Source information: Chemical mapping of a 207-nucleotide RNA with DMS and 2A3. The reactions ran in a buffer of 150 mM KOAc, 10 mM MgCl2 and 150 mM bicine (pH 8.5), at 24 C. Source: RMDB library OK3TST, as collected in RNAgym. For DMS, 3,562 sequencing reads were counted. For 2A3, 2,281 sequencing reads were counted.
RNA sequence: GGGAACGACUCGAGUAGAGUCGAAAAAAUAAGAAGGUGCACGUACCUGCCUUCUAGAUGCUCAUAGCCUAGUGGCUGGAGGCUGAGGAUCAUGGCAUACACAUUUUGUCAUAUAUUAGAAGGUGCUGGAUGCUGUGAAGUAAAGCAACGUAUGGAAAGAACAGUCGUAAUUCGUUACGACUGUUCUAAAAGAAACAACAACAACAAC
Reactivity to DMS in 0.01 (KOAc 150mM, MgCl2 10mM, bicine 150mM(pH8.5), 24C), signal-to-noise 2, nucleotides 027 to 156: a040a080u020a120a070g000a080a020g000g040u000g000c060a060c060g020u000a130c030c010u000g000c000c000u000u000c000u000a090g020a110u000g020c020u000c000a150u010a070g040c020c010u000a120g020u000g010g020c040u010g000g000a080g020g010c020u010g000a190g010g000a110u000c060a080u010g030g040c010a020u000a080c070a110c090a160u020u000u010u010g000u000c080a060u000a190u010a140u010u000a120g020a050a070g010g000u000g030c060u000g000g000a110u000g030c010u000g000u000g030a090a160g010u000a070a060a090g000c050a070a050c090g000u000a090u010g000g000a140a140
Reactivity to 2A3 in 0.01 (KOAc 150mM, MgCl2 10mM, bicine 150mM(pH8.5), 24C), signal-to-noise 4, nucleotides 027 to 156: a000a010u230a030a010g060a010a000g060g000u060g020c060a010c120g060u090a070c000c000u010g000c010c000u030u010c010u020a040g010a090u040g030c010u020c040a090u170a060g000c000c000u040a050g020u020g160g050c040u030g040g020a020g000g000c000u000g000a000g030g020a030u030c020a010u050g000g020c020a010u100a030c120a000c060a170u030u060u120u110g080u050c020a010u110a040u080a060u190u110a060g040a030a010g000g010u030g050c090u020g030g030a030u040g000c040u000g030u030g070a050a030g060u120a090a080a020g060c030a040a030c030g050u100a080u190g060g090a180a100